[RMDB]
RNA sequence: GGGAACGACUCGAGUAGAGUCGAAAACUAUCCAACCCUUGAAAAACGGCGCUCCUGGACGAUCUUCGUCGAUUUUUAAAAAUGUUGCGUCACGCGCGUAACGUGACAGGGUUAAUAUCACAAAGCAACGCCACUUCACCAAUUGUGUAAAGCGCCACUAUGGCUGAGUGUUCGCACUCAGCCAUAGAAAAGAAACAACAACAACAAC
Reactivity to 2A3 in 0.01 (KOAc 150mM, MgCl2 10mM, bicine 150mM(pH8.5), 24C), signal-to-noise 1, nucleotides 027 to 156: c000u120a190u140c110c030a050a130c000c010c030u040u100g030a090a020a020a000a000c020g010g020c000g050c020u100c030c020u100g020g050a050c020g090a150u050c130u300u020c050g040u000c010g170a260u180u000u010u020u250a150a120a080a080a060u070g000u000u000g000c000g030u020c070a040c060g060c000g000c000g030u000a040a000c020g010u020g090a020c010a000g030g000g000u030u110a040a050u050a050u120c030a040c040a060a110a000g140c020a000a100c050g020c060c000a050c100u090u160c050a130c100c030a040a130u130u060g000u000g000u090a000a210a000g050c000g000c000c000a010

Source: RMDB library OK3TST, as collected in RNAgym. This 207-nucleotide RNA was probed chemically with 2A3. 2A3 adducts were read by reverse transcription with SuperScript II with manganese.